[RMDB]
RNA sequence: GGGAACGACUCGAGUAGAGUCGAAAAGCACCGCCGCAGUGCAGCCAACCGCCCACCGCACACACGCUGCCCGAGCCUGCUACUGUCGCAGUCAUACCCGGUCCGGGGCCGGACCCGGGUAGGCGUAGGUAAAUAUGAUGUUCGCAUCAUAUUUACCAAAAGAAACAACAACAACAAC
Reactivity to 2A3 in 0.01 (KOAc 150mM, MgCl2 10mM, bicine 150mM(pH8.5), 24C), signal-to-noise 5, nucleotides 027 to 126: g020c020a010c040c030g080c030c030g030c060a030g020u030g050c020a010g050c020c020a050a050c020c020g020c010c000c000a030c020c010g030c010a030c000a000c000a000c090g020c030u040g020c000c010c010g030a030g030c010c010u040g040c020u040a070c030u140g090u140c040g000c070a030g000u020c030a120u030a040c000c000c000g020g000u000c010c010g060g020g220g070c160c020g030g000a030c110c210c000g020g010g000u000a010g010g010c030g020u060a070
Reactivity to DMS in 0.01 (KOAc 150mM, MgCl2 10mM, bicine 150mM(pH8.5), 24C), signal-to-noise 7, nucleotides 027 to 126: g010c050a090c030c040g010c050c050g020c060a110g020u000g010c030a100g010c040c070a090a120c080c070g000c040c020c020a070c060c050g020c050a060c080a090c100a060c080g010c030u010g000c030c020c020g010a090g020c070c020u000g010c040u010a070c070u010g000u000c110g010c070a100g000u000c050a130u000a040c010c000c000g010g010u000c000c000g010g010g000g000c160c030g000g000a030c070c030c030g020g010g020u000a000g000g010c030g010u000a070
An RNA of 177 nucleotides, treated with 2A3 and DMS and read out base by base. Conditions: 150 mM KOAc, 10 mM MgCl2 and 150 mM bicine (pH 8.5), 24 C. For 2A3 the reverse transcriptase was SuperScript II with manganese. The 2A3 profile rests on 12,252 reads.